[RMDB]
RNA sequence: GGGAACGACUCGAGUAGAGUCGAAAAGACACAUGAGUACCUAGCACGUGCGGUACAGUACCGAUCGAUCUACGAUCUAGACACUAGAGCGCGGUACCUAGAGCUGGAUCACAUAGUACACAGACUAGAUCCGUAGCAAGUUCGCUUGCUACGGAUCAAAAGAAACAACAACAACAAC
Reactivity to 2A3 in 0.01 (KOAc 150mM, MgCl2 10mM, bicine 150mM(pH8.5), 24C), signal-to-noise 2, nucleotides 027 to 126: g040a010c040a010c030a190u110g090a010g060u050a030c000c030u050a050g020c060a040c120g160u160g000c020g020g030u050a050c120a100g000u030a030c000c010g010a060u080c030g030a040u000c020u100a060c060g020a030u000c020u010a040g080a140c040a020c150u030a030g000a020g050c060g000c010g100g050u050a060c000c010u060a070g000a040g010c020u010g020g010a050u000c010a000c000a080u080a050g040u070a010c090a010c020a050g060a020c010u000a050
Reactivity to DMS in 0.01 (KOAc 150mM, MgCl2 10mM, bicine 150mM(pH8.5), 24C), signal-to-noise 2, nucleotides 027 to 126: g000a080c100a140c110a070u010g000a150g010u000a100c040c030u010a070g030c060a080c170g040u010g030c040g010g000u010a050c130a100g010u000a020c020c010g010a080u010c120g030a070u000c130u010a100c120g000a050u000c040u000a090g050a100c090a050c080u000a060g000a030g020c040g010c070g000g020u000a060c020c060u000a050g010a130g010c000u010g030g000a070u000c040a080c100a140u000a030g000u010a080c050a150c130a120g000a040c110u030a150